[RMDB]
RNA sequence: GGGAACGACUCGAGUAGAGUCGAAAACUGUGAGCGUGACGGUGGUAGCUGCGGUUGAAGCAAUGAACUGGCUUAAGUCUGCUGCUAAGCUGCUGGCUGCUGAGGUCAAAGAUAAGAAGACUGGAGAGAUUCUUCGCAAGCGUUGCGCUGUGCAUUGCUUUAAUACGUUUUUCGAAACGUAUUAAAGAAAAGAAACAACAACAACAAC
Reactivity to 2A3 in 0.01 (KOAc 150mM, MgCl2 10mM, bicine 150mM(pH8.5), 24C), signal-to-noise 9, nucleotides 027 to 156: c040u030g030u060g070a020g010c020g010u020g020a010c010g020g100u100g030g010u030a010g000c020u010g000c010g020g030u070u050g080a080a010g010c020a020a070u140g050a080a060c050u070g140g050c050u140u170a080a020g030u020c040u080g060c020u000g000c010u060a050a020g000c000u020g010c030u060g060g000c000u010g000c010u020g030a020g030g040u050c000a060a070a030g070a030u130a080a050g030a040a010g030a030c080u110g050g020a060g010a010g020a100u150u020c000u040u030c030g030c110a080a030g060c000g030u000u000g000c000g000c010u030g030u050g060c040a080u050u230g030
Reactivity to DMS in 0.01 (KOAc 150mM, MgCl2 10mM, bicine 150mM(pH8.5), 24C), signal-to-noise 5, nucleotides 027 to 156: c040u000g000u010g010a080g040c030g040u000g010a050c020g040g030u000g030g020u000a090g020c020u000g030c010g030g020u010u010g010a120a120g010c030a040a080u010g000a040a040c040u010g020g030c160u000u000a060a070g010u000c020u000g020c040u000g020c040u000a140a110g010c010u000g000c020u000g030g020c020u010g010c010u010g010a270g020g020u000c030a050a090a150g020a190u000a100a120g010a080a090g000a080c070u000g010g000a180g000a140g010a150u000u000c040u000u000c030g010c080a080a130g010c040g030u000u000g020c010g010c010u000g030u010g000c070a300u010u000g010